[RMDB]
RNA sequence: GGGAACGACUCGAGUAGAGUCGAAAAAGUGGAAUGUUAUGGUUUAGAUAUGCAGUGUCACCUAAAAGCUCACGUGUGAGACAAUGCAAGAAUUUUCAGAGGUGAAAUGAUUAGAUUUUUGAGGGUACAACACGAUAGACUUCGGUCUAUCGUGUUGAAAAGAAACAACAACAACAAC
Reactivity to 2A3 in 0.01 (KOAc 150mM, MgCl2 10mM, bicine 150mM(pH8.5), 24C), signal-to-noise 2, nucleotides 027 to 126: a030g110u090g040g060a120a000u010g010u130u030a070u090g090g030u070u080u040a100g010a100u090a030u150g080c040a030g020u010g010u070c010a070c020c070u110a130a120a090a020g050c030u030c000a070c100g120u100g030u020g050a000g030a020c020a020a070u130g030c000a010a070g050a140a100u000u090u030u150c010a020g020a020g100g070u050g040a070a020a020u000g030a010u030u180a150g090a210u060u100u100u060u040g040a080g000g050g020u040a060
Reactivity to DMS in 0.01 (KOAc 150mM, MgCl2 10mM, bicine 150mM(pH8.5), 24C), signal-to-noise 2, nucleotides 027 to 126: a080g030u000g000g000a090a050u000g020u000u000a070u010g010g010u010u000u010a060g010a100u010a050u000g010c060a040g000u010g010u000c020a060c040c040u010a040a120a090a130g010c030u000c060a030c150g010u000g010u000g010a070g010a040c090a050a050u000g000c050a030a050g020a060a090u010u000u000u000c060a080g010a080g010g010u000g010a040a090a050u010g010a080u000u000a040g010a070u010u000u000u000u000g010a070g020g000g010u010a110

About this RNA
This 177-nucleotide RNA was probed chemically with 2A3 and DMS. It was measured as part of the RMDB library OK2TRN. DMS adducts were read by reverse transcription with MarathonRT. For DMS, 2,005 sequencing reads were counted. Reactivities are rounded to 0.1 and cut off at 0 and 3. For 2A3 the reverse transcriptase was SuperScript II with manganese.